Conditions: 150 mM KOAc, 10 mM MgCl2 and 150 mM bicine (pH 8.5), 24 C.
Structure probing data (2A3 and DMS) for a 177-nucleotide construct.
It was measured as part of the RMDB library TTRDEL.
RNA sequence: GGGAACGACUCGAGUAGAGUCGAAAAGAUAUGGACGUGUCCACUCAGCGAUGAAAUCGGAAACGAUGGAGCUGGUGGCACGUCCUAAGUCAAAAGAGUAGGUAAUGGUUCGCCAUUACCUACUCAACAUCAUAAUCUACUUCGGUAGAUUAUGAUGAAAAGAAACAACAACAACAAC
Reactivity to 2A3 in 0.01 (KOAc 150mM, MgCl2 10mM, bicine 150mM(pH8.5), 24C), signal-to-noise 5, nucleotides 027 to 126: g020a010u070a030u100g000g010a010c000g010u000g110u130c020c000a010c050u300c030a000g010c010g220a300u060g010a040a030a010u020c010g010g030a050a050a040c020g000a000u010g000g020a010g000c010u010g000g000u000g000g000c000a000c000g000u000c000c000u000a000a000g000u000c000a000a010a050a110g000a010g010u010a000g000g010u000a000a000u010g020g040u040u220c300g030c040c000a000u000u000a000c000c000u000a000c000u000c000a000a000
Reactivity to DMS in 0.01 (KOAc 150mM, MgCl2 10mM, bicine 150mM(pH8.5), 24C), signal-to-noise 9, nucleotides 027 to 126: g010a030u000a300u000g000g000a010c000g010u000g000u010c000c000a010c000u010c010a010g010c000g000a130u020g010a070a100a010u000c000g000g000a130a100a190c010g010a010u000g000g000a080g020c000u000g010g010u000g000g000c000a000c000g000u000c000c000u000a010a060g010u000c040a080a070a130a130g010a010g010u000a000g000g000u000a000a000u000g000g000u000u010c240g020c010c000a010u000u000a000c000c000u000a000c000u000c000a040a130